[RMDB]
RNA sequence: GGGAACGACUCGAGUAGAGUCGAAAAUUGGCUCUCACUUACGGCUGCUGAGUAUGAUCAGACUACCUAUGGCUCUUCUACCAACCCUAUGUAUGUCUCUGAUACUGUGACGUUCGUCAAUGUGGCCGGUAUAAGGCUCAUUCGUGAGCCUUAUACCAAAAGAAACAACAACAACAAC
Reactivity to 2A3 in 0.01 (KOAc 150mM, MgCl2 10mM, bicine 150mM(pH8.5), 24C), signal-to-noise 4, nucleotides 027 to 126: u060u040g050g000c000u000c000u010c040a050c040u070u090a020c040g020g000c010u040g040c040u050g020a010g030u140a100u150g070a070u060c010a000g050a070c020u030a030c010c020u020a070u040g010g000c020u010c010u160u050c040u090a090c030c030a040a090c040c000c010u050a060u100g060u010a050u170g050u010c000u000c020u100g030a020u060a110c020u060g020u040g060a010c040g070u110u130c050g030u150c030a040a030u090g040u040g060g020c000c040
Reactivity to DMS in 0.01 (KOAc 150mM, MgCl2 10mM, bicine 150mM(pH8.5), 24C), signal-to-noise 4, nucleotides 027 to 126: u010u000g000g020c030u010c030u000c050a060c070u010u010a160c110g030g000c020u010g010c010u000g000a090g010u000a050u010g000a070u000c090a040g000a060c030u000a080c040c050u010a040u000g000g000c040u000c080u000u000c070u000a110c110c090a050a120c050c010c030u000a050u010g010u000a040u010g010u010c030u000c040u010g000a060u000a060c040u000g010u000g010a090c030g010u000u000c100g030u000c040a070a060u010g020u000g000g020c060c070
About this RNA
Chemical mapping of a 177-nucleotide RNA with 2A3 and DMS. High DMS reactivity at an A or C suggests that its Watson-Crick edge is free. Source: RMDB library OK2TRN, as collected in RNAgym. Values cover nucleotides 27 to 126. For 2A3 the reverse transcriptase was SuperScript II with manganese. For DMS, 4,530 sequencing reads were counted.